[RMDB]
RNA sequence: GGGAACGACUCGAGUAGAGUCGAAAAGAUAUGGAAAGUCCUGCAACAACAGCCUAAGUCGGAAACGACUUAGGACAUGUUGUCAGGCUUUCCUAAGUCAAAAGCACUGGUGUUCGCACCAGUGCAACGAUUUGAUAUCGUUCGCGAUAUCAAAUCGAAAAGAAACAACAACAACAAC
Reactivity to 2A3 in 0.01 (KOAc 150mM, MgCl2 10mM, bicine 150mM(pH8.5), 24C), signal-to-noise 2, nucleotides 027 to 126: g020a010u090a040u120g000g050a020a000a000g080u240c020c010u020g010c080a160a020c000a020a000c010a130g060c010c000u010a000a000g000u000c010g040g040a100a020a090c000g030a010c000u000u000a010g010g020a030c010a060u000g000u010u010g040u070c010a020g000g000c000u010u000u020c000c000u000a060a020g040u030c030a150a000a070a060g000c000a000c010u000g000g030u040g030u140u170c300g050c100a010c010c010a010g000u020g000c000a010a000
Reactivity to DMS in 0.01 (KOAc 150mM, MgCl2 10mM, bicine 150mM(pH8.5), 24C), signal-to-noise 2, nucleotides 027 to 126: g010a040u000a300u000g000g010a000a000a000g010u010c000c000u000g000c090a150a030c000a010a010c120a070g000c010c000u000a000a010g010u000c010g010g000a130a110a220c010g010a010c000u010u000a010g010g010a030c060a040u000g000u000u000g000u000c000a010g000g000c020u000u000u000c000c000u000a020a100g010u020c040a080a100a130a150g040c000a010c000u000g010g030u000g000u000u010c250g000c010a020c010c000a020g010u000g000c000a010a020
Chemical mapping of a 177-nucleotide RNA with 2A3 and DMS. DMS adducts were read by reverse transcription with MarathonRT. For 2A3 the reverse transcriptase was SuperScript II with manganese. The DMS profile rests on 2,492 reads.